[RMDB]
RNA sequence: GGGAACGACUCGAGUAGAGUCGAAAAUCGUGCCCGUUCGCGGGCACGAGUCACCUACACCGCUUCCAGUCUGGGCCACUACCACUCUAUGAGAUCUCAGUAUAUUUGGUCAGUUCGCUGACCAAAACAAGGCUGCUUAUUUCGAUAAGCAGCCUUGAAAAGAAACAACAACAACAAC
Reactivity to DMS in 0.01 (KOAc 150mM, MgCl2 10mM, bicine 150mM(pH8.5), 24C), signal-to-noise 1, nucleotides 027 to 126: u000c000g010u000g010c000c000c000g000u020u030c210g030c000g060g010g020c000a000c000g000a010g000u000c190a170c010c010u000a050c150a130c070c070g000c030u000u000c010c070a050g000u000c020u010g030g010g030c040c060a040c060u000a090c070c060a050c040u000c030u010a060u000g000a090g000a090u000c040u000c070a100g000u020a120u000a120u010u000u000g000g000u000c000a020g000u000u000c200g020c020u000g000a010c000c000a000a000a020a240